[RMDB]
Chemical mapping of a 177-nucleotide RNA with 2A3 and DMS. For 2A3 the reverse transcriptase was SuperScript II with manganese. For 2A3, 20,687 sequencing reads were counted.
RNA sequence: GGGAACGACUCGAGUAGAGUCGAAAAGCUGGUGUGACCGCGCAAGGUGCGCGCGGUACGUAUCGAGCAGCGCUCAACUCUGAAAAACAUCAAGACCAUGUGUCUCUAACUGUGCCACUCUGUGGUUACUCCAAUAUAAGUUCGCUUAUAUUGGAGUAAAAGAAACAACAACAACAAC
Reactivity to 2A3 in 0.01 (KOAc 150mM, MgCl2 10mM, bicine 150mM(pH8.5), 24C), signal-to-noise 9, nucleotides 027 to 126: g010c010u010g010g020u020g040u040g040a010c010c000g000c000g000c020a070a080g290g110u200g100c080g010c000g000c000g020g000u010a030c000g000u020a010u050c050g040a020g000c010a010g020c010g010c030u020c010a010a070c020u010c020u080g050a080a040a000a030a020c020a070u100c060a080a030g030a050c010c020a100u130g070u030g020u040c010u000c010u050a080a090c050u070g040u090g070c000c010a040c020u200c120u200g030u020g030g000u010u010
Reactivity to DMS in 0.01 (KOAc 150mM, MgCl2 10mM, bicine 150mM(pH8.5), 24C), signal-to-noise 6, nucleotides 027 to 126: g000c010u010g010g020u010g020u000g000a060c010c000g000c000g020c010a200a130g030g030u010g020c190g010c000g030c000g010g000u000a020c040g020u000a040u000c050g000a050g010c010a100g010c050g000c030u000c020a070a050c050u000c020u010g000a040a060a060a100a060c110a070u000c100a080a050g000a120c030c020a080u000g020u010g010u000c010u000c080u000a090a080c150u010g000u010g000c010c010a040c030u000c150u010g000u000g000g010u000u000